[RMDB]
Source: RMDB library TTRDEL, as collected in RNAgym.
Chemical mapping of a 177-nucleotide RNA with 2A3 and DMS.
The reactions ran in a buffer of 150 mM KOAc, 10 mM MgCl2 and 150 mM bicine (pH 8.5), at 24 C.
For 2A3, 7,177 sequencing reads were counted.
2A3 adducts were read by reverse transcription with SuperScript II with manganese.
Values cover nucleotides 27 to 126.
Reactivities are rounded to 0.1 and cut off at 0 and 3.
RNA sequence: GGGAACGACUCGAGUAGAGUCGAAAAGAUAUGGACCAAACGUAUUCAACUGUGCGAAGAACUCGGAAACGAGGGAGCACAGCGCAUUUACGUGGUCCUAAGUCAAAGGCCAACUUCGGUUGGCCAAGUGACAACAAAAGUUCGCUUUUGUUGUCACAAAAGAAACAACAACAACAAC
Reactivity to 2A3 in 0.01 (KOAc 150mM, MgCl2 10mM, bicine 150mM(pH8.5), 24C), signal-to-noise 3, nucleotides 027 to 126: g020a010u090a030u160g000g000a010c000c020a250a190a030c020g000u000a020u040u120c030a070a060c030u000g000u000g020c020g200a300a040g000a120a050c000u010c000g000g020a040a070a040c000g000a010g000g000g040a010g000c000a010c010a020g000c030g020c050a070u010u040u070a000c000g010u010g000g000u020c000c000u010a090a000g040u000c050a080a080a090g000g000c000c000a000a000c000u030u030c180g160g000u000u010g010g000c000c000a000a000
Reactivity to DMS in 0.01 (KOAc 150mM, MgCl2 10mM, bicine 150mM(pH8.5), 24C), signal-to-noise 4, nucleotides 027 to 126: g000a050u000a300u000g010g000a020c000c000a040a120a130c000g010u000a000u000u000c220a160a060c010u000g020u000g000c000g000a140a190g010a130a160c010u000c000g010g000a110a060a120c010g020a020g000g000g000a090g010c000a010c000a010g010c050g010c200a130u000u000u000a000c000g040u000g010g030u000c000c010u000a030a080g000u000c030a040a100a160g000g000c000c000a010a010c010u000u000c130g030g030u000u000g000g000c000c010a000a010